[RMDB]
RNA sequence: GGGAACGACUCGAGUAGAGUCGAAAAAGCGAGUGUACGCACUCGCAACGGCACGCUGUCCCGACGUUAACAUCUCCAUGAGUUCGCCGGGUACCCUCUCCAUCAGCGGCGUGACCGCCUCCUUAAAUUAACAUCGUUGGUUCGCCAACGAUGUUAAAAAAGAAACAACAACAACAAC
Reactivity to DMS in 0.01 (KOAc 150mM, MgCl2 10mM, bicine 150mM(pH8.5), 24C), signal-to-noise 2, nucleotides 027 to 126: a040g030c000g010a020g050u000g010u000a070c180g040c010a020c000u000c010g040c000a030a030c010g010g000c010a040c020g000c020u010g020u020c020c010c010g000a060c050g000u030u040a040a050c040a120u000c000u030c170c200a070u020g000a040g010u010u010c020g010c010c020g020g000g000u000a100c080c020c050u010c040u010c020c040a060u030c130a100g010c040g000g000c020g010u010g000a090c000c000g010c150c020u000c020c010u000u020a060a090a090
Reactivity to 2A3 in 0.01 (KOAc 150mM, MgCl2 10mM, bicine 150mM(pH8.5), 24C), signal-to-noise 6, nucleotides 027 to 126: a000g000c010g010a020g000u020g030u050a050c280g020c120a000c000u010c000g000c000a010a000c000g000g000c000a020c010g000c000u020g040u090c000c000c010g010a020c010g010u070u130a100a030c050a300u040c030u030c150c090a170u300g030a010g050u020u040c010g000c010c000g030g000g000u110a130c030c010c000u060c010u020c040c020a150u110c040a040g030c000g030g000c010g010u030g040a260c010c010g020c020c010u060c010c000u130u100a120a210a170